[RMDB]
RNA sequence: GGGAACGACUCGAGUAGAGUCGAAAAGAGAGGGUGACCCAAGACGAGGUCGUCGACGAAGUGGUCAGCGACGUCGCCGAGGCGCCGAAGUCGGCAAGUGAACGCGCAGCCGAAUCCACUGCACCGCCUACCGGAUACGGUUCGCCGUAUCCGGUAGAAAAGAAACAACAACAACAAC
Reactivity to 2A3 in 0.01 (KOAc 150mM, MgCl2 10mM, bicine 150mM(pH8.5), 24C), signal-to-noise 5, nucleotides 027 to 126: g190a000g010a060g030g070g050u100g070a260c010c000c010a020a050g050a040c050g030a020g040g030u030c010g000u010c000g010a040c020g070a200a120g140u160g080g060u040c040a010g010c000g020a030c010g120u020c010g000c050c010g030a090g020g010c030g010c020c010g020a040a010g060u070c020g000g000c040a130a040g040u050g110a090a030c040g040c010g000c060a020g050c000c000g000a020a040u020c010c000a040c020u050g000c030a040c060c010g010c010
Reactivity to DMS in 0.01 (KOAc 150mM, MgCl2 10mM, bicine 150mM(pH8.5), 24C), signal-to-noise 3, nucleotides 027 to 126: g030a110g000a120g000g000g040u020g000a160c050c000c050a050a180g000a110c030g000a070g000g000u000c000g040u000c030g000a040c060g000a130a140g010u030g000g010u000c120a080g020c000g000a140c070g010u000c020g000c010c030g000a130g020g000c040g000c030c020g010a020a060g030u000c050g000g020c100a140a100g000u000g000a050a080c110g020c050g020c040a170g010c010c020g000a100a120u040c030c020a050c040u030g010c060a070c020c020g020c090
Structure probing data (2A3 and DMS) for a 177-nucleotide construct. Source: RMDB library OK1LIB, as collected in RNAgym. For 2A3 the reverse transcriptase was SuperScript II with manganese.